Description:
Structure probing data (2A3 and DMS) for a 177-nucleotide construct.

RNA sequence: GGGAACGACUCGAGUAGAGUCGAAAAAAGUUUUUGUAGGAACUCUGCGCCAACUUGAGCUGACAUUCUUCCUGCUACCUCACUCAUUGGUGAUAACAAUGGUGAAGAUCGGUCUGGUAACUGCACAGACUUCUGACUGAUUCGUCAGUCAGAAGUCAAAAGAAACAACAACAACAAC
Reactivity to 2A3 in 0.01 (KOAc 150mM, MgCl2 10mM, bicine 150mM(pH8.5), 24C), signal-to-noise 2, nucleotides 027 to 126: a000a000g090u100u070u060u060u070g050u030a060g000g010a040a050c000u000c030u120g000c040g070c030c000a060a060c030u110u120g020a020g030c010u030g030a030c000a080u050u000c010u050u000c000c000u020g000c020u040a030c000c020u010c020a020c010u200c040a050u020u030g060g030u080g110a020u070a180a020c020a010a060u030g000g010u040g010a040a000g060a070u080c030g020g010u020c030u010g010g050u050a050a020c010u050g000c080a030c020a090
Reactivity to DMS in 0.01 (KOAc 150mM, MgCl2 10mM, bicine 150mM(pH8.5), 24C), signal-to-noise 2, nucleotides 027 to 126: a050a100g020u000u020u010u000u000g020u000a110g000g010a080a050c070u000c040u000g000c080g000c010c030a090a080c070u000u010g000a090g030c040u010g000a120c100a080u000u000c110u000u000c010c000u010g010c060u000a110c080c010u010c020a020c020u030c030a030u000u000g000g020u030g030a150u020a050a090c020a000a030u000g000g010u000g020a030a050g000a050u000c110g040g010u000c020u000g020g030u010a070a060c030u000g000c100a110c150a100
The 2A3 profile rests on 1,419 reads. Conditions: 150 mM KOAc, 10 mM MgCl2 and 150 mM bicine (pH 8.5), 24 C. Values cover nucleotides 27 to 126.